[RMDB]
RNA sequence: GGGAACGACUCGAGUAGAGUCGAAAAGACAGGACCGUGCUAGACAACCUGGUCGGCGUCAGCAUGGUUUCGGCUACCGCGCAAGGCGUGAUUGGCCGAAUCGCUGCGCCAGUUGCCUUGCAACGCCCUCCACCAGGGGAUUCGUCCCCUGGUGGAGAAAAGAAACAACAACAACAAC
Reactivity to DMS in 0.01 (KOAc 150mM, MgCl2 10mM, bicine 150mM(pH8.5), 24C), signal-to-noise 1, nucleotides 027 to 126: g000a140c130a080g010g000a070c070c010g000u010g000c000u000a110g010a010c070a040a170c090c100u000g000g000u000c190g020g020c160g000u000c030a000g010c000a090u000g000g010u000u020u000c020g000g000c000u010a070c100c040g020c200g010c050a130a090g010g030c030g000u000g010a060u010u000g020g030c020c010g000a060a010u000c080g010c010u000g030c090g020c020c000a070g000u010u010g010c000c000u010u000g000c060a130a100c080g010c060c030
Reactivity to 2A3 in 0.01 (KOAc 150mM, MgCl2 10mM, bicine 150mM(pH8.5), 24C), signal-to-noise 2, nucleotides 027 to 126: g080a010c050a080g040g000a020c080c090g030u010g000c010u070a080g010a050c040a090a080c060c050u210g300g080u170c110g000g000c000g020u170c020a000g020c020a040u120g010g000u000u030u040c020g000g000c030u060a040c010c060g070c010g000c070a150a100g200g030c000g070u140g050a110u040u100g030g000c020c050g030a030a080u150c060g000c060u080g000c020g020c030c050a010g000u020u060g000c000c020u000u020g000c010a020a030c010g040c020c010
The record gives the reactivity of an RNA of 177 nucleotides to DMS and 2A3. For 2A3, 1,661 sequencing reads were counted.